The record gives the reactivity of an RNA of 177 nucleotides to DMS and 2A3. For DMS, 16,455 sequencing reads were counted. 2A3 adducts were read by reverse transcription with SuperScript II with manganese. The reactions ran in a buffer of 150 mM KOAc, 10 mM MgCl2 and 150 mM bicine (pH 8.5), at 24 C. Source: RMDB library OK2TST, as collected in RNAgym.

RNA sequence: GGGAACGACUCGAGUAGAGUCGAAAAUUUGGACUACCUAAAUCUAACCACCUUACCAUCUAGUAGCAGAUAUAGUAGAUUUAAUUAGAGUGAAUAAAACACUGGUGAACGAGAUCUAGAGAUCUUCAUUUAAGCUAUUAUUCGUAAUAGCUUAAAUAAAAGAAACAACAACAACAAC
Reactivity to DMS in 0.01 (KOAc 150mM, MgCl2 10mM, bicine 150mM(pH8.5), 24C), signal-to-noise 9, nucleotides 027 to 126: u010u010u010g020g010a160c040u000a090c050c020u000a050a060a060u000c030u000a080a190c080c030a050c060c030u000u000a080c070c050a040u000c040u000a080g020u000a060g010c100a050g000a080u000a060u010a090g000u000a040g010a060u000u000u000a060a090u010u010a100g010a060g010u000g000a100a110u010a060a080a100a110c040a020c020u000g010g020u000g020a060a080c150g010a050g000a020u000c020u010a090g000a140g000a070u000c020u010u000c210
Reactivity to 2A3 in 0.01 (KOAc 150mM, MgCl2 10mM, bicine 150mM(pH8.5), 24C), signal-to-noise 5, nucleotides 027 to 126: u070u040u090g060g010a010c020u040a060c040c030u040a050a050a040u050c040u040a040a060c000c010a020c020c030u010u050a040c020c020a040u040c020u030a040g030u040a010g100c040a020g070a070u110a030u050a180g060u030a030g010a070u030u080u120a090a080u090u080a040g020a020g080u020g050a090a110u140a140a120a030a010c020a000c010u050g000g060u060g070a030a010c030g020a010g000a050u020c010u060a040g010a010g010a140u020c010u080u040c020